[RMDB]
Chemical mapping of a 207-nucleotide RNA with DMS and 2A3.
RNA sequence: GGGAACGACUCGAGUAGAGUCGAAAAGUAAGCCCCCAAGCAAACUAUGGGUUUUGGGUGAUUGAUGCGUCAAUGAAGGUUCAUCAAUUGUAAUGAAUGUGCACUCUGGUGGUGGGUGCAAUCAUCAGGGAAAGUAAGCAUGUUGGGGCUGGAAUAACCUAUAAUCGAGUUUCGACUCGAUUAUAGGAAAAGAAACAACAACAACAAC
Reactivity to DMS in 0.01 (KOAc 150mM, MgCl2 10mM, bicine 150mM(pH8.5), 24C), signal-to-noise 3, nucleotides 027 to 156: g010u010a110a120g000c020c000c000c010c010a070a130g030c060a070a100a060c050u010a090u000g030g000g000u000u010u000u010g010g000g040u010g010a060u010u010g000a030u010g040c150g040u000c060a090a110u000g020a180a120g020g010u000u000c010a040u010c050a040a070u000u010g010u000a070a090u000g000a040a050u000g010u000g010c000a160c020u000c010u030g010g050u010g040g010u000g020g000g000u010g010c040a030a020u000c020a050u000c020a110g030g010g000a080a090a110g010u000a070a130g010c040a100u010g020u000u000g020g010g030g030c020u000g030g000a060a060u000a060a180
Reactivity to 2A3 in 0.01 (KOAc 150mM, MgCl2 10mM, bicine 150mM(pH8.5), 24C), signal-to-noise 6, nucleotides 027 to 156: g060u060a050a030g000c010c000c000c010c030a040a000g040c020a050a070a080c070u120a120u170g050g010g030u080u050u130u090g060g010g010u110g010a010u010u020g000a010u020g010c030g010u010c030a030a080u200g100a270a070g010g010u030u030c010a010u010c010a020a040u030u040g050u100a050a050u060g040a070a030u090g030u040g120c010a000c020u030c020u030g060g040u040g020g040u050g020g030g020u030g010c010a000a020u020c010a000u010c020a000g000g000g040a050a030a030g040u120a070a010g020c020a020u050g030u040u130g040g000g000g000c010u010g010g000a020a020u080a050a040

The reactions ran in a buffer of 150 mM KOAc, 10 mM MgCl2 and 150 mM bicine (pH 8.5), at 24 C. For DMS, 7,389 sequencing reads were counted.